[RMDB]
RNA sequence: GGGAACGACUCGAGUAGAGUCGAAAAUAAGCAAAAGACAACCACCUUUCCCGCUGACAAUAGCGUUAUCCCUCUGCACUUCGGUAAUAUGAGGGCACAGUAAAUCCCGCAAGGAUGAAAAUGUGAUUAAACAGUUACAGCUUCGGCUGUAACUGAACACAAUCACACUCUUCGGAGUGUGAUUGUGAAAAGAAACAACAACAACAAC
Reactivity to DMS in 0.01 (KOAc 150mM, MgCl2 10mM, bicine 150mM(pH8.5), 24C), signal-to-noise 1, nucleotides 027 to 156: u020a070a080g000c060a030a030a110a160g000a090c130a120a140c000c020a030c050c040u040u000u000c030c020c000g010c030u020g010a120c120a020a070u000a060g020c050g020u000u000a060u000c020c000c000u010c010u000g010c100a090c040u000u020c120g020g000u000a020a180u020a090u000g000a060g000g010g000c070a020c140a070g030u000a090a190a050u000c000c000c000g000c240a160a280g040g020a050u000g010a070a020a090a120u000g000u010g010a160u000u010a060a080a090c000a020g020u000u000a000c010a000g010c000u000u000c300g070g020c000u000g010u020a010a000c000u000g020a060a190
Reactivity to 2A3 in 0.01 (KOAc 150mM, MgCl2 10mM, bicine 150mM(pH8.5), 24C), signal-to-noise 3, nucleotides 027 to 156: u140a030a030g070c070a010a090a090a070g080a100c070a030a070c110c040a060c030c020u000u050u030c000c000c050g000c060u060g050a100c060a180a150u090a140g040c070g060u090u080a100u110c020c000c000u000c000u020g010c040a010c010u040u070c180g080g000u010a030a040u130a110u300g000a000g000g020g000c000a000c000a000g010u020a000a050a000u000c020c000c000g170c090a070a000g020g010a000u010g010a000a000a000a020u050g000u010g010a020u060u170a080a160a040c010a000g000u000u020a000c000a000g000c000u030u120c160g140g000c000u000g000u000a000a000c000u000g000a000a000